[RMDB]
RNA sequence: GGGAACGACUCGAGUAGAGUCGAAAAGUGCAUAAGGCGGCAAUUCAUGCACGGCACGCCGCAUUGGCAUUGCAGUGCAGCCACGAUUUGAUGGAGAGAGAGUUGCGUCGCGUGCUGUCCAUCACGCACCGUCCGGUAGGUUCGCCUACCGGACGGUAAAAGAAACAACAACAACAAC
Reactivity to DMS in 0.01 (KOAc 150mM, MgCl2 10mM, bicine 150mM(pH8.5), 24C), signal-to-noise 1, nucleotides 027 to 126: g040u040g050c010a050u000a030a120g020g050c030g000g000c000a080a100u000u000c070a110u000g000c040a020c000g050g060c050a040c300g000c000c020g000c270a050u040u100g000g010c000a090u030u000g070c010a070g000u040g010c000a060g020c010c000a050c040g050a110u030u030u030g000a060u030g000g000a190g000a100g030a090g000a060g020u000u000g000c010g020u000c040g000c130g020u040g000c010u000g000u000c000c000a030u000c110a020c110g070c110
Reactivity to 2A3 in 0.01 (KOAc 150mM, MgCl2 10mM, bicine 150mM(pH8.5), 24C), signal-to-noise 2, nucleotides 027 to 126: g040u010g000c020a020u080a080a110g000g000c050g110g070c080a000a030u090u010c010a010u010g000c000a000c010g010g000c000a020c030g000c030c000g100c090a150u110u270g010g000c050a080u080u140g000c050a040g020u000g000c000a010g060c010c000a030c000g130a070u040u160u300g110a180u040g060g000a100g000a000g000a000g000a000g060u020u010g000c000g040u040c020g000c000g010u000g000c080u020g070u000c020c000a030u050c020a000c030g060c050